[RMDB]
RNA sequence: GGGAACGACUCGAGUAGAGUCGAAAAUCCUAAGUCGAUUGCUAGUACGAGAAUUCAAUCAACAGCCUCGUCGGAAACGACGAGGACAUGAUUGAACUCGUACUUGGACCAAUCGAUAUGGAAAACGCUAGCUGUCAGUUCGCUGACAGCUAGCGAACUGUACUGCAUAGUUCGCUAUGCAGUACAGAAAAGAAACAACAACAACAAC
Reactivity to DMS in 0.01 (KOAc 150mM, MgCl2 10mM, bicine 150mM(pH8.5), 24C), signal-to-noise 1, nucleotides 027 to 156: u000c000c000u000a110a300g040u010c010g040a040u000u010g010c020u000a000g040u000a000c020g010a040g010a050a300u000u000c000a000a000u000c000a080a100c070a250g030c010c000u000c010g020u000c010g060g000a150a010a300c000g030a010c000g010a000g010g000a010c030a170u000g010a030u030u010g000a010a110c000u000c000g060u000a010c000u000u000g030g010a150c210c010a020a050u000c000g010a020u000a170u060g010g000a050a100a030a170c020g060c000u010a030g020c000u000g030u000c000a010g030u010u030c300g030c000u000g040a120c000a040g010c010u010a030g000c000g000a030a030
Reactivity to 2A3 in 0.01 (KOAc 150mM, MgCl2 10mM, bicine 150mM(pH8.5), 24C), signal-to-noise 4, nucleotides 027 to 156: u020c010c010u030a150a020g030u000c000g010a000u010u010g040c010u010a000g010u000a000c000g000a010g030a210a300u020u000c000a000a010u000c000a010a130c040a120g020c010c000u000c000g000u000c010g030g030a080a100a080c020g000a000c000g000a000g010g010a030c010a070u030g000a000u000u000g000a010a010c000u000c000g010u010a000c000u000u000g000g060a060c090c010a000a000u000c000g000a000u000a070u100g080g020a050a100a020a030c010g000c010u000a010g000c000u000g010u000c000a010g020u050u190c240g050c150u010g000a000c000a010g010c000u000a040g010c000g000a000a000